[RMDB]
RNA sequence: GGGAACGACUCGAGUAGAGUCGAAAAAGUUCGGAUUGGGAUCAGCAACUCAACCCCGUGAAGUCGGAGUUGCUAGUAAUCGCAGAUCAGCAACGCUGCGGUGAAUACGUUCAUGGGCCCUGUACACAGUAUAAUUGAAAUUCGUUUCAAUUAUACUAAAAGAAACAACAACAACAAC
Reactivity to DMS in 0.01 (KOAc 150mM, MgCl2 10mM, bicine 150mM(pH8.5), 24C), signal-to-noise 9, nucleotides 027 to 126: a070g010u010u010c030g000g010a080u010u010g000g000g000a080u010c060a040g010c020a020a020c020u000c020a140a100c100c020c010c050g020u020g010a070a080g010u020c100g000g000a040g010u000u000g000c040u010a050g010u020a080a020u000c020g000c010a020g000a060u030c120a120g010c230a070a070c200g010c020u000g010c020g000g010u000g000a090a080u020a070c070g010u010u000c030a050u010g010g000g000c030c000c010u000g010u020a090c150a100c170
Reactivity to 2A3 in 0.01 (KOAc 150mM, MgCl2 10mM, bicine 150mM(pH8.5), 24C), signal-to-noise 9, nucleotides 027 to 126: a000g100u090u070c040g030g040a130u060u120g060g010g020a050u090c050a010g020c010a010a030c010u010c010a050a100c020c010c010c030g050u070g090a070a020g140u210c130g040g010a020g010u010u010g000c000u000a020g020u030a010a030u010c020g000c020a010g020a090u100c080a050g180c050a060a100c180g000c030u010g000c000g000g000u010g000a010a040u160a070c050g030u010u030c020a040u050g010g000g020c000c010c000u050g030u080a070c140a000c010
The record gives the reactivity of an RNA of 177 nucleotides to DMS and 2A3. For DMS, 66,103 sequencing reads were counted. High 2A3 reactivity points to a flexible backbone, as in loops and unpaired stretches. The RNA was probed in 150 mM KOAc, 10 mM MgCl2 and 150 mM bicine (pH 8.5) at 24 C. Values cover nucleotides 27 to 126. 2A3 adducts were read by reverse transcription with SuperScript II with manganese.